This 177-nucleotide RNA was probed chemically with 2A3 and DMS. 2A3 adducts were read by reverse transcription with SuperScript II with manganese. The reactions ran in a buffer of 150 mM KOAc, 10 mM MgCl2 and 150 mM bicine (pH 8.5), at 24 C. DMS adducts were read by reverse transcription with MarathonRT.

RNA sequence: GGGAACGACUCGAGUAGAGUCGAAAAGACUCGUAGCAGAUAGCUCAGUAACACGUGGCCAAACUACCCUCUGGAUCGGGAUAACCUCGGGAAACUGAGGCUAAUCCUGAAUAGCGUUCUCACCCUGAUCAUUAUAACGUUUCGACGUUAUAAUGAUAAAAGAAACAACAACAACAAC
Reactivity to 2A3 in 0.01 (KOAc 150mM, MgCl2 10mM, bicine 150mM(pH8.5), 24C), signal-to-noise 9, nucleotides 027 to 126: g020a000c010u010c030g060u080a020g030c080a030g030a210u130a030g010c010u020c060a040g040u100a110a040c040a010c130g050u080g040g000c030c020a040a060a040c040u090a070c010c020c000u030c030u060g100g050a120u070c010g010g000g000a000u010a010a020c000c000u000c010g010g000g010a040a040a030c010u000g000a000g020g000c000u030a050a090u000c000c000u000g000a010a020u080a030g020c010g010u020u000c010u000c010a050c010c010c030u050g040
Reactivity to DMS in 0.01 (KOAc 150mM, MgCl2 10mM, bicine 150mM(pH8.5), 24C), signal-to-noise 9, nucleotides 027 to 126: g000a050c020u000c030g010u010a090g010c060a090g010a090u010a080g010c020u000c030a080g010u010a080a120c120a110c080g020u000g010g000c030c040a060a140a110c090u020a090c040c040c020u000c050u010g010g000a190u010c030g000g000g000a030u000a100a180c000c010u000c000g010g000g000a090a090a140c000u000g000a010g000g010c020u000a050a080u000c010c010u000g010a030a120u010a060g010c030g010u000u000c010u000c020a210c060c040c030u010g000